[RMDB]
RNA sequence: GGGAACGACUCGAGUAGAGUCGAAAACUUGGACUAAUUUUGGCUCUAUUUUUGGACAGUGUUCCAUUGCGUAGGGGCAUCUUGUGUAGAAUCUGCAACCUUGGGGUGGGUUUAGUAGGCUUAUUGGAGUUGAUUCAUAAUUCGUUAUGAAUCAACUAAAAGAAACAACAACAACAAC
Reactivity to DMS in 0.01 (KOAc 150mM, MgCl2 10mM, bicine 150mM(pH8.5), 24C), signal-to-noise 9, nucleotides 027 to 126: c110u010u000g010g000a130c110u030a100a100u000u000u000u000g010g000c010u000c010u000a020u000u000u000u000u010g010g010a090c130a120g010u010g010u000u000c020c000a100u010u000g010c110g020u000a090g010g010g010g000c050a040u000c050u000u000g020u000g010u010a070g010a080a080u000c060u000g010c050a060a080c060c050u000u000g010g010g010g030u000g010g010g000u000u000u000a050g020u000a060g010g010c070u000u000a080u010u010g010g010
Reactivity to 2A3 in 0.01 (KOAc 150mM, MgCl2 10mM, bicine 150mM(pH8.5), 24C), signal-to-noise 8, nucleotides 027 to 126: c020u070u150g080g090a050c060u100a080a160u040u020u010u030g010g000c000u000c010u010a050u030u090u010u070u130g070g020a040c050a100g080u020g030u160u010c010c010a030u030u150g030c060g040u060a040g010g020g010g000c020a020u020c040u080u100g020u010g020u050a030g030a130a070u010c010u030g000c010a050a090c010c000u020u040g020g010g010g040u040g010g040g000u040u040u010a030g010u010a010g040g000c040u130u110a100u140u250g060g000